[RMDB]
RNA sequence: GGGAACGACUCGAGUAGAGUCGAAAAACGGACUUCGGUCCGUAAAAAAUCCUAAGUCAAACGUCACCAGGAGGUAUAUACGAUGAGUGUCGGAAACGACACGAGUAUGCGAACUGGUGAUACGUUUGAUAUGGAAAGCGUGGGUUUUCGAACCCAACGCCAAGCCAUUGUUCGCAAUGGCUUGGCGAAAAGAAACAACAACAACAAC
Reactivity to 2A3 in 0.01 (KOAc 150mM, MgCl2 10mM, bicine 150mM(pH8.5), 24C), signal-to-noise 1, nucleotides 027 to 156: a010c000g000g010a010c000u060u060c070g080g000u000c000c020g010u000a030a000a000a000a000a020u030c050c000u050a080a000g040u000c000a000a000a000c000g000u000c000a000c030c020a030g080g020a050g050g300u050a230u020a000u000a110c250g130a230u300g030a100g020u000g000u000c000g060g060a170a140a150c060g000a000c000a000c010g000a000g000u050a000u010g060c100g060a180a000c000u000g000g000u000g000a000u030a000c000g000u000u030u030g000a000u000a010u050g020g060a130a110a040g090c080g080u060g000g000g080u120u110u030u050c240g080a160a030c000c010c030a000a030